Source: RMDB library RFMREP, as collected in RNAgym. Structure probing data (DMS and 2A3) for a 177-nucleotide construct. Reactivities are given for positions 27 through 126. For DMS, 821 sequencing reads were counted. 2A3 is a SHAPE reagent: it acylates the 2'-hydroxyl of flexible nucleotides of all four kinds. 2A3 adducts were read by reverse transcription with SuperScript II with manganese.
RNA sequence: GGGAACGACUCGAGUAGAGUCGAAAACCGGGUUACCGCGGCCUGUCCACGAUGGAAGGUCAUUUGAUUCUCGCUGAUUUUCAGGAGCUAUUUACUAUGCGUAUUAUUGGUCUGAUUCGUCAGACCACCAAAUGGGAUUCUUCGGAAUCCCAUUUGGAAAAGAAACAACAACAACAAC
Reactivity to DMS in 0.01 (KOAc 150mM, MgCl2 10mM, bicine 150mM(pH8.5), 24C), signal-to-noise 1, nucleotides 027 to 126: c070c020g000g000g020u010u010a090c080c050g020c030g030g000c030c010u030g010u010c000c020a110c300g010a100u020g030g000a300a030g000g000u000c010a100u020u010u000g000a110u010u000c000u000c020g000c040u000g010a110u010u020u020u000c020a000g000g020a050g020c190u000a030u000u010u000a040c150u010a090u010g030c060g010u010a080u010u010a100u010u010g040g010u000c000u010g010a050u000u020c220g000u000c000a000g000a000c000c010a050
Reactivity to 2A3 in 0.01 (KOAc 150mM, MgCl2 10mM, bicine 150mM(pH8.5), 24C), signal-to-noise 1, nucleotides 027 to 126: c010c010g030g050g010u070u010a040c010c070g060c020g010g000c000c010u130g250u040c000c040a110c100g190a120u220g000g000a010a020g000g020u060c070a070u110u090u070g110a110u040u000c010u000c050g280c140u040g040a070u050u010u250u260c010a000g040g000a000g070c110u080a070u080u280u030a160c060u060a110u210g070c020g080u180a050u250u080a090u110u100g000g000u000c010u010g000a000u040u040c000g050u000c070a000g020a010c000c000a000